[RMDB]
RNA sequence: GGGAACGACUCGAGUAGAGUCGAAAACUUGAGUAUAGGGGCGAAAGACUAAUCGAACAACCUAGUAGCUGGUUCCUUCCGAAGUUUCCCUCAGGAUAGCUGGAGCAGUAUUCUAGUUUCAUCUUGUAUCCCUAUUUUUGUUCGCAAAAAUAGGGAUAAAAGAAACAACAACAACAAC
Reactivity to DMS in 0.01 (KOAc 150mM, MgCl2 10mM, bicine 150mM(pH8.5), 24C), signal-to-noise 4, nucleotides 027 to 126: c020u020u010g010a040g020u000a050u010a050g010g000g010g000c030g000a060a080a090g010a060c090u000a060a080u020c060g010a230a110c140a100a170c120c050u000a050g020u010a050g000c030u010g010g000u000u000c010c030u000u020c080c020g010a040a080g010u010u020u010c010c000c030u010c070a080g000g000a020u020a070g000c040u000g010g000a050g000c100a080g010u010a060u000u010c010u010a030g010u000u000u030c140a080u010c010u000u000g010u000
Reactivity to 2A3 in 0.01 (KOAc 150mM, MgCl2 10mM, bicine 150mM(pH8.5), 24C), signal-to-noise 4, nucleotides 027 to 126: c010u050u060g030a020g030u130a080u090a150g030g010g010g000c020g080a110a030a000g050a050c050u080a080a090u080c040g050a050a060c040a020a050c030c000u030a020g010u050a010g040c040u030g060g000u010u040c000c000u040u010c040c030g040a030a010g010u010u050u030c010c010c010u020c030a030g030g020a030u030a050g000c010u020g010g020a030g010c080a060g060u090a110u130u020c010u030a020g020u010u060u090c060a040u000c020u020u020g030u040